An RNA of 177 nucleotides, treated with 2A3 and DMS and read out base by base.
For 2A3, 1,746 sequencing reads were counted.
Source: RMDB library RFMREP, as collected in RNAgym.

[RMDB]
RNA sequence: GGGAACGACUCGAGUAGAGUCGAAAAUACAGUGUCUCUUUCGCUCGAAAGAACAGAGGUAGAACAAAUGUAAUGGCCGAGAUAUCGUUUCAGUCGUCAUUCUUUGAUUGACGAUUCGAUUGUUGCUGAAUUAGGAAAACUUCGGUUUUCCUAAUUCAAAAGAAACAACAACAACAAC
Reactivity to 2A3 in 0.01 (KOAc 150mM, MgCl2 10mM, bicine 150mM(pH8.5), 24C), signal-to-noise 3, nucleotides 027 to 126: u080a000c050a020g090u020g050u010c020u010c000u150u060u000c120g070c070u130c090g070a060a050a060g040a040a030c050a030g070a070g020g070u070a030g040a160a010c010a040a150a080u190g000u110a120a050u090g120g020c030c020g060a040g010a090u090a050u090c000g010u000u070u010c040a050g000u000c010g010u010c010a030u120u050c070u170u180u260g000a020u030u100g000a000c010g000a020u000u030c020g100a100u000u080g030u060u030g070c070u030
Reactivity to DMS in 0.01 (KOAc 150mM, MgCl2 10mM, bicine 150mM(pH8.5), 24C), signal-to-noise 3, nucleotides 027 to 126: u010a060c060a070g020u000g010u000c070u000c010u000u000u010c050g030c110u010c110g010a060a080a070g000a030a030c010a050g000a070g010g000u000a030g000a080a080c040a040a100a080u000g010u010a030a080u010g010g000c030c010g000a080g000a130u010a060u000c010g010u010u010u000c030a050g020u000c000g000u000c000a010u000u000c100u010u020u010g000a020u000u000g020a020c000g000a010u000u000c070g010a070u000u000g000u010u010g010c080u000